This 177-nucleotide RNA was probed chemically with DMS and 2A3. The reactions ran in a buffer of 150 mM KOAc, 10 mM MgCl2 and 150 mM bicine (pH 8.5), at 24 C. The 2A3 profile rests on 5,890 reads. High DMS reactivity at an A or C suggests that its Watson-Crick edge is free. The DMS profile rests on 4,608 reads.
[RMDB]
RNA sequence: GGGAACGACUCGAGUAGAGUCGAAAAUUAUAUAGCGUGUGCAAGACGCUGAACUUGCCAUGAUCUGGAACUUUAGUGCUGAGGACCGAGUUCCAGAUCAUCAUUUCGGACCUCAGCACUAAUAUAAGAAACUAUGAGAAUUCGUUCUCAUAGUUUCAAAAGAAACAACAACAACAAC
Reactivity to DMS in 0.01 (KOAc 150mM, MgCl2 10mM, bicine 150mM(pH8.5), 24C), signal-to-noise 4, nucleotides 027 to 126: u010u000a110u010a150u010a050g010c020g020u010g000u010g010c050a030a020g000a080c070g010c140u010g000a100a080c040u000u000g010c010c090a030u000g000a120u000c050u000g010g000a090a100c180u010u000u010a040g010u000g010c000u000g000a020g020g000a090c010c020g000a010g010u000u000c070c050a070g010a060u000c060a030u010c140a060u010u000u000c010g010g000a140c010c000u000c010a010g010c010a010c010u000a000a020u010a080u010a100a160
Reactivity to 2A3 in 0.01 (KOAc 150mM, MgCl2 10mM, bicine 150mM(pH8.5), 24C), signal-to-noise 4, nucleotides 027 to 126: u140u030a090u030a060u110a180g050c010g000u020g080u110g010c010a010a010g030a030c060g030c290u050g020a080a020c000u000u020g000c010c000a040u040g020a100u070c040u050g050g050a050a070c040u040u040u060a020g000u020g020c000u000g010a010g020g000a010c010c020g020a010g040u090u030c040c010a030g030a000u010c000a000u000c000a010u020u110u060c020g000g000a050c000c000u000c010a000g020c000a000c000u010a010a030u080a010u010a070a070